[RMDB]
RNA sequence: GGGAACGACUCGAGUAGAGUCGAAAAAUUGCUUAGUACAGAAUGAGCCUGGUGUUUUAUCCCGUCUUUCUGGUAUUUUGGCCGCUCGUGGAUUUAACAUUGAUUCCUUGGUUGUUUGCGCAACUGAACCGGAUAAAUAGUUCGCUAUUUAUCCGGUAAAAGAAACAACAACAACAAC
Reactivity to DMS in 0.01 (KOAc 150mM, MgCl2 10mM, bicine 150mM(pH8.5), 24C), signal-to-noise 3, nucleotides 027 to 126: a100u000u000g010c070u010u000a050g000u000a140c070a070g000a120a050u010g010a060g000c120c110u010g010g020u020g020u000u000u020u000a100u000c010c000c010g010u000c050u000u010u000c050u000g010g000u000a070u000u000u000u010g000g020c000c040g010c080u000c060g010u000g010g010a080u000u000u000a070a070c100a050u010u010g000a140u000u000c010c010u000u010g010g000u000u000g000u000u000u010g000c220g000c030a020a150c030u000g010a190